[RMDB]
RNA sequence: GGGAACGACUCGAGUAGAGUCGAAAAUAAGAGCAUGUACGAAUCACGAUAUGAGAGUUCCUGGUGAAUCCCGGGUACAAGGAAAGGUAUUAAUCUCCCACUGCGUUCCCUUGCAGUAGCGAUAUAAUAGGUCCUUAUUCUUCGGAAUAAGGACCUAAAAAGAAACAACAACAACAAC
Reactivity to DMS in 0.01 (KOAc 150mM, MgCl2 10mM, bicine 150mM(pH8.5), 24C), signal-to-noise 2, nucleotides 027 to 126: u030a040a110g010a100g010c060a050u000g010u000a110c090g040a120a110u000c050a110c090g010a190u010a120u010g000a120g010a260g000u000u010c000c010u000g010g000u020g010a110a110u010c140c040c000g000g000g070u000a020c090a030a050g010g010a110a070a060g000g040u000a080u000u000a020a090u010c050u010c030c020c010a120c070u010g030c020g010u000u000c000c000c030u000u020g010c020a110g010u000a090g020c070g000a050u040a140u030a100a140